[RMDB]
RNA sequence: GGGAACGACUCGAGUAGAGUCGAAAAUAUUGUGACCCACUUAGGUGUGUACUUAUCCGGGUCUAGCAGUGGGUACGUGUUCUUCGCCAAAGUUUCCGCUCAGCUCGUUCUCGAGUAUUGCGCGAACCUCCCAAUUAUACUUCGGUAUAAUUGGGAGAAAAGAAACAACAACAACAAC
Reactivity to DMS in 0.01 (KOAc 150mM, MgCl2 10mM, bicine 150mM(pH8.5), 24C), signal-to-noise 5, nucleotides 027 to 126: u000a040u010u020g020u010g010a040c000c010c010a050c050u000u010a060g010g010u000g020u010g010u010a090c070u000u010a100u010c150c130g000g000g010u000c030u000a080g030c150a030g020u000g010g010g010u000a010c030g020u000g010u000u000c130u000u000c020g010c080c050a080a080a150g010u010u000u010c040c020g020c030u000c050a060g010c130u000c000g000u000u000c080u000c010g010a100g010u010a090u000u000g010c080g010c060g010a070a120c150
Reactivity to 2A3 in 0.01 (KOAc 150mM, MgCl2 10mM, bicine 150mM(pH8.5), 24C), signal-to-noise 5, nucleotides 027 to 126: u140a050u070u290g060u100g160a060c000c000c000a010c010u030u090a060g110g000u180g060u060g040u280a060c040u180u130a140u190c080c080g090g060g000u020c020u020a060g080c070a020g040u010g020g000g000u010a010c000g020u030g030u010u050c080u030u040c030g030c040c020a050a090a180g020u040u090u010c020c020g000c000u010c010a000g000c030u010c020g040u120u060c040u010c020g010a030g020u180a250u180u220g050c120g000c040g010a020a050c010
An RNA of 177 nucleotides, treated with DMS and 2A3 and read out base by base. For DMS, 6,903 sequencing reads were counted. For DMS the reverse transcriptase was MarathonRT.